[RMDB]
RNA sequence: GGGAACGACUCGAGUAGAGUCGAAAAAAAAUCGUGGGCAAGGUAUUCUUUGAACUUCUUAUCGUUCAUUUGUGCCACCUGAUUCGGUGUAGCGAUUUCACAUCCAGGACCUCUCUCUCGCAGGUCUCCUUCCGUGGGUGGCUGCGGCAUGCUACGCAUGCGGAUUGAGUUUCGACUCAAUCCGCAUAAAAGAAACAACAACAACAAC
Reactivity to DMS in 0.01 (KOAc 150mM, MgCl2 10mM, bicine 150mM(pH8.5), 24C), signal-to-noise 2, nucleotides 027 to 156: a020a030a020a020u010c050g040u010g030g040g020c020a030a050g000g000u000a040u000u000c060u030u010u000g000a040a030c030u000u000c120u010u000a150u010c180g020u000u000c030a080u010u010u000g010u000g000c000c010a080c030c010u010g000a130u000u000c050g010g010u000g020u000a100g010c070g000a110u010u000u000c100a080c030a080u010c030c030a130g000g000a040c040c010u000c020u000c070u000c080u000c070g010c090a060g000g020u000c020u000c030c010u000u000c070c090g030u000g020g030g060u000g030g020c000u000g030c000g000g020c060a100u000g000c020u000a040c080g030c070
Reactivity to 2A3 in 0.01 (KOAc 150mM, MgCl2 10mM, bicine 150mM(pH8.5), 24C), signal-to-noise 3, nucleotides 027 to 156: a010a010a000a010u080c060g020u080g010g010g050c040a040a020g060g000u080a090u140u100c080u060u080u080g050a060a030c030u150u050c060u240u250a130u210c050g010u030u010c020a090u060u060u160g090u070g000c020c010a030c000c010u080g030a160u100u120c030g010g010u030g020u070a020g010c020g050a060u040u190u210c100a040c040a080u020c020c030a020g000g030a020c010c030u010c000u000c030u030c030u030c090g060c080a010g000g080u000c060u060c030c030u140u080c040c050g010u100g030g000g000u010g010g010c020u000g000c010g020g010c020a050u050g000c010u060a040c050g000c050
Record summary
This 207-nucleotide RNA was probed chemically with DMS and 2A3. As a SHAPE reagent, 2A3 marks flexible, mostly unpaired nucleotides at the ribose 2'-OH. Conditions: 150 mM KOAc, 10 mM MgCl2 and 150 mM bicine (pH 8.5), 24 C.